[RMDB]
RNA sequence: GGGAACGACUCGAGUAGAGUCGAAAACUUGAACAGGGCCUCCUCUACCUGCCCCAGGAACUCACCACCUGUGAUAGCGUUGUAACAUUUGAAUUAACAGAUAUUGUGCACUGCCGCAUGGCCGCCCGUAAUAGCCGUCAUUCGUGACGGCUAUUACAAAAGAAACAACAACAACAAC
Reactivity to DMS in 0.01 (KOAc 150mM, MgCl2 10mM, bicine 150mM(pH8.5), 24C), signal-to-noise 2, nucleotides 027 to 126: c120u000u010g020a090a130c150a090g030g000g010c060c010u000c020c010u000c030u010a080c090c030u000g040c020c050c000c030a070g020g000a040a140c100u000c030a070c020c080a120c030c040u010g030u000g010a140u010a060g020c070g010u000u000g030u000a050a110c080a050u000u020u010g000a120a070u010u010a040a060c070a010g010a080u000a130u010u000g000u000g000c030a080c080u000g000c040c020g000c050a050u000g000g010c030c070g010c010c010c050

An RNA of 177 nucleotides, treated with DMS and read out base by base. The reactions ran in a buffer of 150 mM KOAc, 10 mM MgCl2 and 150 mM bicine (pH 8.5), at 24 C.